Source: RMDB library OK3TST, as collected in RNAgym.
Structure probing data (2A3) for a 207-nucleotide construct.
For 2A3, 753 sequencing reads were counted.
For 2A3 the reverse transcriptase was SuperScript II with manganese.
The RNA was probed in 150 mM KOAc, 10 mM MgCl2 and 150 mM bicine (pH 8.5) at 24 C.

[RMDB]
RNA sequence: GGGAACGACUCGAGUAGAGUCGAAAAGCUCACCCUUUGCCCCUCUUAUUUUAUUAUUAAGAGAUGUUAGAUGAUCAGGGAAGCAUCUUCAUUUAAGGCUACCAGGGACACUGGAAGGAAUAAGACAUGAUCAGAAAAAUAAAAACAUGCAUGAUAACUUUUAAUACCGGUUCGCCGGUAUUAAAAGAAAAGAAACAACAACAACAAC
Reactivity to 2A3 in 0.01 (KOAc 150mM, MgCl2 10mM, bicine 150mM(pH8.5), 24C), signal-to-noise 1, nucleotides 027 to 156: g050c000u090c050a030c040c020c050u070u120u260g060c030c000c020c000u040c000u010u020a040u050u180u060u090a270u080u000a020u020u000a080a000g000a000g000a010u050g050u260u050a030g000a050u020g000a010u080c060a050g130g000g000a000a000g000c000a030u000c000u000u030c000a090u000u090u180a070a000g020g000c020u050a090c030c010a000g010g010g020a030c000a020c130u100g040g000a080a080g030g010a030a000u070a170a030g000a000c020a020u060g070a080u190c090a020g170a020a120a000a050a000u300a020a110a130a020a000c030a020u170g020c050a020u030g100a000u300a150a000